[RMDB]
RNA sequence: GGGAACGACUCGAGUAGAGUCGAAAAGAUAUGGAGAAGAGCGAUAAGCCUGGUGUCGGAAACGACACGGGCUUUUGACGCUCCUCCUAAGUCAAAAGACAAGGUGGGGUUCGCCCCACCUUGUCAACACUUAGUGGAUGUUCGCAUCCACUAAGUGAAAAGAAACAACAACAACAAC
Reactivity to 2A3 in 0.01 (KOAc 150mM, MgCl2 10mM, bicine 150mM(pH8.5), 24C), signal-to-noise 2, nucleotides 027 to 126: g040a050u100a050u120g080g020a010g020a300a110g000a040g020c040g020a070u020a130a040g000c010c040u260g300g000u050g030u010c000g000g030a100a080a060c010g000a000c000a000c030g000g060g000c010u010u000u000u010g000a010c010g000c000u000c000c000u010c000c000u010a060a010g020u030c040a000a080a080a140g010a010c000a020a020g000g000u000g000g000g000g040u110u210c220g120c020c000c000c000a000c000c000u000u010g000u010c000a000a000
Reactivity to DMS in 0.01 (KOAc 150mM, MgCl2 10mM, bicine 150mM(pH8.5), 24C), signal-to-noise 4, nucleotides 027 to 126: g010a040u000a300u010g000g000a020g000a110a110g010a010g020c010g020a110u000a020a030g010c000c000u010g040g040u010g010u000c000g000g010a100a060a150c010g010a000c000a010c000g000g000g010c000u000u000u010u000g010a150c030g000c010u000c000c010u000c000c000u010a030a120g000u010c030a080a090a150a100g010a020c000a010a000g000g030u000g010g000g010g010u000u010c280g000c000c000c020c010a000c000c000u000u000g000u000c010a030a120
Chemical mapping of a 177-nucleotide RNA with 2A3 and DMS. 2A3 adducts were read by reverse transcription with SuperScript II with manganese. It was measured as part of the RMDB library TTRDEL. The RNA was probed in 150 mM KOAc, 10 mM MgCl2 and 150 mM bicine (pH 8.5) at 24 C. For 2A3, 3,512 sequencing reads were counted.